The record gives the reactivity of an RNA of 177 nucleotides to 2A3 and DMS.
2A3 adducts were read by reverse transcription with SuperScript II with manganese.
The data come from the RNA Mapping Database (RMDB), library RFM100.
The DMS profile rests on 2,025 reads.
DMS adducts were read by reverse transcription with MarathonRT.
The RNA was probed in 150 mM KOAc, 10 mM MgCl2 and 150 mM bicine (pH 8.5) at 24 C.
High 2A3 reactivity points to a flexible backbone, as in loops and unpaired stretches.
RNA sequence: GGGAACGACUCGAGUAGAGUCGAAAAAGAACCCCGAGAAGGGGAGUGAAAAGAGCCUGAAAUCGGCCGGGGAUAGUGAGCAGUGGCUCGAAAGGUAAUCCCGGCAAAGGAAAGUGCUGAGAGGCGCAAUGUAAAUUUCCUUCGGGAAAUUUACAUUAAAAGAAACAACAACAACAAC
Reactivity to 2A3 in 0.01 (KOAc 150mM, MgCl2 10mM, bicine 150mM(pH8.5), 24C), signal-to-noise 1, nucleotides 027 to 126: a030g010a030a130c010c000c000c000g030a050g130a050a070g010g010g040g020a030g020u060g040a000a040a090a240g050a020g050c000c000u060g070a080a000a150u100c050g100g000c000c000g000g050g000g010a090u120a170g160u120g020a030g000c060a040g110u250g240g000c000u020c020g050a090a040a000g150g000u180a060a010u000c000c000c020g000g010c030a000a030a000g100g000a080a040a020g000u010g000c000u030g010a010g010a020g140g000c000g000c020
Reactivity to DMS in 0.01 (KOAc 150mM, MgCl2 10mM, bicine 150mM(pH8.5), 24C), signal-to-noise 2, nucleotides 027 to 126: a180g000a180a210c000c000c010c030g000a130g000a130a110g000g000g010g020a070g000u020g000a170a060a080a050g020a070g010c010c000u000g000a040a060a070u010c160g020g010c030c000g000g010g000g000a030u050a080g030u020g000a030g000c000a260g030u020g030g030c000u000c000g030a020a030a050g000g000u020a070a140u030c030c000c000g060g050c020a020a060a060g000g010a110a120a130g000u000g000c020u000g000a170g000a120g000g030c000g000c070